RNA sequence: GGGAACGACUCGAGUAGAGUCGAAAAGGCCAUCGUUUUUUCCAGACCAUUUUCGAUGGCCAUAGGUCUGGCUUAUAGUUCAAUCGCCGAGAGGCGUACAGUUAGAGUAGCGAGCUCGAAGCACGCGACCGGUAAGAGCUCGCGAAGGUCGCGGAGAAUUACCUAUGAGGUUCGCCUCAUAGGUAAUAAAAGAAACAACAACAACAAC
Reactivity to DMS in 0.01 (KOAc 150mM, MgCl2 10mM, bicine 150mM(pH8.5), 24C), signal-to-noise 2, nucleotides 027 to 156: g000g010c000c020a040u000c010g010u000u000u000u000u020u030c030c040a240g000a070c060c030a120u000u000u010u000c030g010a030u010g010g010c000c010a010u000a030g060g020u000c020u000g030g010c110u010u000a150u010a130g010u010u000c030a100a170u000c010g060c040c000g040a300g000a300g010g010c030g030u000a080c130a140g020u000u000a140g000a110g000u000a170g010c000g010a020g010c010u000c040g030a070a190g010c050a080c030g010c010g000a060c000c040g000g010u020a070a300g000a100g020c000u000c010g000c040g000a040a070g010g010u000c030g070c030g000g000a240g000a110
Reactivity to 2A3 in 0.01 (KOAc 150mM, MgCl2 10mM, bicine 150mM(pH8.5), 24C), signal-to-noise 2, nucleotides 027 to 156: g010g000c010c000a010u000c050g050u020u040u030u060u040u190c040c020a030g010a020c040c000a050u050u090u000u050c010g020a010u010g000g010c000c000a010u010a000g010g010u000c010u010g040g060c040u110u100a100u140a070g030u040u080c010a050a100u010c030g010c010c000g080a070g000a040g080g010c020g010u020a030c020a040g010u030u080a020g020a020g060u050a000g000c010g000a000g000c000u000c020g030a110a040g070c020a030c080g030c010g050a090c060c010g030g000u010a060a010g000a010g010c010u010c000g000c010g000a010a000g000g010u030c010g000c030g090g040a060g070a030

Source: RMDB library OK3TST, as collected in RNAgym.
Structure probing data (DMS and 2A3) for a 207-nucleotide construct.
The 2A3 profile rests on 1,172 reads.